[RMDB]
RNA sequence: GGGAACGACUCGAGUAGAGUCGAAAACUGAGACGCUUCGGCGUCUCAGAAAUGGAACACAGGCGAAGGAAGGAAGAGCUAUCAUGCCAAUGACCACGUGGAAAACUCAUACGUUCGCGUAUGAGAACUACCCUUACUCGUUCGCGAGUAAGGGUAGAAAAGAAACAACAACAACAAC
Reactivity to 2A3 in 0.01 (KOAc 150mM, MgCl2 10mM, bicine 150mM(pH8.5), 24C), signal-to-noise 3, nucleotides 027 to 126: c000u000g000a000g000a000c000g030c010u020u090c200g150g010c000g010u000c000u010c000a010g000a000a010a010u070g020g020a070a020c050a010c020a070g030g010c050g060a060a020g050g020a020a010g050g010a010a050g030a000g000c010u030a060u190c030a040u130g020c000c000a030a040u050g030a040c000c010a070c080g040u120g030g030a060a070a040a070c000u000c000a000u000a010c000g010u000u050c280g000c010g080u000a000u010g000a000g010a000a000
Reactivity to DMS in 0.01 (KOAc 150mM, MgCl2 10mM, bicine 150mM(pH8.5), 24C), signal-to-noise 3, nucleotides 027 to 126: c000u000g010a000g010a010c010g030c000u000u010c170g040g000c000g030u000c000u000c000a000g010a000a120a050u010g010g010a060a090c090a070c120a070g000g000c070g010a070a100g000g020a070a050g010g000a070a050g020a070g000c050u000a040u000c070a060u000g000c050c050a050a030u000g010a120c040c030a090c100g020u010g000g000a100a080a080a140c010u000c020a010u000a000c010g000u000u000c180g030c020g030u010a000u030g000a010g020a040a070